Conditions: 150 mM KOAc, 10 mM MgCl2 and 150 mM bicine (pH 8.5), 24 C. This 177-nucleotide RNA was probed chemically with 2A3. 2A3 adducts were read by reverse transcription with SuperScript II with manganese.
[RMDB]
RNA sequence: GGGAACGACUCGAGUAGAGUCGAAAAAUUUGGGGAUGCUCGUCAUCCCAAUCAGAUUUGCUUAGAUACAGAUCCUGGGGAAGAAAACUGGUGGGAACUACAAUUCCUCAUCCUUUGGAAAUGCACGGCGAUGAGACGUGUUCGCACGUCUCAUCGCAAAAGAAACAACAACAACAAC
Reactivity to 2A3 in 0.01 (KOAc 150mM, MgCl2 10mM, bicine 150mM(pH8.5), 24C), signal-to-noise 2, nucleotides 027 to 126: a000u150u060u000g120g060g020g000a000u000g020c030u090c240g170u110c130a080u010c000c000c000a000a000u030c000a000g240a110u120u090u060g000c070u020u280a000g000a000u220a290c000a020g000a000u050c000c000u000g000g000g060g000a150a040g090a120a040a110a000c110u070g170g000u000g000g200g000a000a040c010u170a070c110a030a080u090u020c010c000u020c000a060u050c000c000u000u030u190g070g000a040a130a030u000g000c080a010c160g040
Values cover nucleotides 27 to 126.